[RMDB]
RNA sequence: GGGAACGACUCGAGUAGAGUCGAAAAACUGACAAAUACGCAUUUAUUAGGCUUAUAUAUGUGUAUAUAUACAUUUGAGCCGACAUCUCUGUAUAUCCGACCUGUUAACAGUCCGCAAAAAAUGGGCUAAUCGUUUUACCUUCGGGUAAAACGAUUAAAAAGAAACAACAACAACAAC
Reactivity to 2A3 in 0.01 (KOAc 150mM, MgCl2 10mM, bicine 150mM(pH8.5), 24C), signal-to-noise 3, nucleotides 027 to 126: a000c050u120g050a010c060a050a190a000u100a020c020g000c030a030u010u110u100a100u130u110a060g040g090c020u090u030a010u000a000u000a000u150g020u030g020u000a040u010a000u030a000u050a180c050a040u080u050u160g000a010g020c000c000g010a000c000a080u030c020u020c000u030g050u050a060u000a050u080c000c010g060a080c010c040u090g080u160u050a070a010c000a020g030u030c030c030g080c150a020a090a010a020a010a100u110g000g000g010c000
Reactivity to DMS in 0.01 (KOAc 150mM, MgCl2 10mM, bicine 150mM(pH8.5), 24C), signal-to-noise 3, nucleotides 027 to 126: a140c070u000g000a080c220a100a110a070u010a030c020g000c040a010u010u000u000a030u010u000a090g000g030c020u010u020a090u070a040u020a010u000g020u000g000u000a080u010a140u050a010u010a030c060a030u000u010u000g000a010g040c000c030g010a110c240a000u000c010u020c020u000g000u000a070u010a060u020c030c030g000a120c050c040u010g000u020u020a060a100c130a040g000u000c020c000g030c120a010a050a020a080a090a050u010g000g000g000c030